The record gives the reactivity of an RNA of 177 nucleotides to DMS and 2A3. The RNA was probed in 150 mM KOAc, 10 mM MgCl2 and 150 mM bicine (pH 8.5) at 24 C. The DMS profile rests on 811 reads. In probing experiments dimethyl sulfate is read out at A N1 and C N3, which are open when not base-paired. Reactivities are given for positions 27 through 126.

[RMDB]
RNA sequence: GGGAACGACUCGAGUAGAGUCGAAAAAUCCUGCCAGUAGUCAUACGCUUAUCUCAAAGAUUAAGCCAUGCACGUCUAAGUAUAGCAUUAUACAGUGAAACUGCGAAUGGCUCAUUAUAUCAGUUAUUGCUAUUACUCAGUUCGCUGAGUAAUAGCAAAAAGAAACAACAACAACAAC
Reactivity to DMS in 0.01 (KOAc 150mM, MgCl2 10mM, bicine 150mM(pH8.5), 24C), signal-to-noise 2, nucleotides 027 to 126: a080u000c010c010u000g060c070c060a120g010u010a020g010u000c020a110u000a090c270g010c000u010u010a070u010c020u000c180a050a100a120g000a030u010u000a040a000g000c000c070a060u020g000c020a050c100g030u010c010u020a150a050g020u000a010u010a030g010c220a100u010u000a020u000a020c020a070g010u000g010a050a110a070c140u010g010c020g010a060a040u000g010g010c000u000c100a130u000u010a070u000a090u000c120a100g000u010u030a020u010
Reactivity to 2A3 in 0.01 (KOAc 150mM, MgCl2 10mM, bicine 150mM(pH8.5), 24C), signal-to-noise 1, nucleotides 027 to 126: a000u010c000c000u000g020c000c020a030g000u110a000g020u050c020a020u040a100c060g060c070u030u020a010u070c120u010c050a220a060a030g000a030u110u130a010a050g000c040c000a010u100g040c020a000c180g030u000c000u030a020a020g010u000a020u050a040g010c000a020u050u130a020u080a020c060a020g040u020g080a030a080a000c010u020g000c040g110a060a050u010g000g000c000u010c010a020u090u220a160u030a050u130c060a010g110u150u100a090u110